[RMDB]
RNA sequence: GGGAACGACUCGAGUAGAGUCGAAAAUACUUGAACUUCUUGAUACUCUUGAACUCUUCGACGUGUUCCUUUGGAACCUGGGCGAUCUCCAACAACCUAACCUGACCGUCGUAGUUGAUCAAAGUACCACCCUUGACGUCAGCUCUGGUCUUGUCGGCACGUGGUGCUAAUUCGUUAGCACCACGUGAAAAGAAACAACAACAACAAC
Reactivity to 2A3 in 0.01 (KOAc 150mM, MgCl2 10mM, bicine 150mM(pH8.5), 24C), signal-to-noise 3, nucleotides 027 to 156: u120a030c060u030u080g080a130a090c010u100u060c020u070u100g030a050u050a160c030u040c030u080u070g050a080a040c010u000c010u050u020c020g050a040c030g070u060g030u100u060c020c000u040u040u080g070g010a030a020c000c060u040g030g010g040c030g070a100u010c010u000c090c000a050a060c020a010a050c040c010u070a040a050c000c020u030g060a010c010c030g080u090c050g050u130a010g000u040u040g040a100u050c050a070a050a040g030u060a100c060c050a050c030c040c000u010u050g040a020c050g030u030c000a010g020c010u010c020u020g040g010u010c000u020u070g100u060c030g000g000
Reactivity to DMS in 0.01 (KOAc 150mM, MgCl2 10mM, bicine 150mM(pH8.5), 24C), signal-to-noise 1, nucleotides 027 to 156: u000a050c000u010u000g010a060a170c100u000u000c020u000u000g000a100u000a080c030u000c000u030u000g000a080a070c040u000c010u000u000c000g030a070c030g010u010g050u000u000c020c050u000u000u000g030g000a100a100c040c060u000g040g000g000c010g010a080u000c020u010c030c070a080a090c060a030a040c010c060u030a110a160c050c020u000g000a070c020c000g070u000c040g000u010a040g010u000u010g020a070u000c060a030a040a120g000u000a030c030c030a080c070c000c070u010u000g010a090c130g020u000c010a060g020c040u000c040u020g000g000u010c060u000u000g030u000c010g000g010

Conditions: 150 mM KOAc, 10 mM MgCl2 and 150 mM bicine (pH 8.5), 24 C. This 207-nucleotide RNA was probed chemically with 2A3 and DMS. 2A3 adducts were read by reverse transcription with SuperScript II with manganese. For 2A3, 2,136 sequencing reads were counted. For DMS the reverse transcriptase was MarathonRT. High DMS reactivity at an A or C suggests that its Watson-Crick edge is free. 2A3 is a SHAPE reagent: it acylates the 2'-hydroxyl of flexible nucleotides of all four kinds.